[RMDB]
RNA sequence: GGGAACGACUCGAGUAGAGUCGAAAAGCAAAGAGUAAAAAAAAUAGAGAGCUUUGCGAGACCUACCAAGGGUGAAGAGAUACCAUCCAAGGAGCUGAAGAGAAAUCUCACUUUAGACGCCUGGGGAAAAAGACCCUUUCGUUCGCGAAAGGGUCAAGUAUUAGGUAUAGUUCGCUAUACCUAAUACAAAAGAAACAACAACAACAAC
Reactivity to 2A3 in 0.01 (KOAc 150mM, MgCl2 10mM, bicine 150mM(pH8.5), 24C), signal-to-noise 1, nucleotides 027 to 156: g000c010a010a020a000g040a040g070u160a040a100a080a070a040a030a070a160u250a040g070a070g000a030g060c020u000u040u030g000c000g000a080g010a070c000c000u020a050c040c030a030a070g020g000g040u060g040a100a080g040a050g010a060u040a150c000c000a040u050c030c000a030a100g010g000a020g040c010u030g020a020a010g000a030g030a110a190a190u050c030u030c020a030c000u120u170u090a080g060a130c100g010c090c060u070g000g010g000g110a030a010a000a060a060g000a020c030c000c000u000u000u000c040g010u050u020c300g000c000g110a000a000a000g050g040g000u000c000a000a000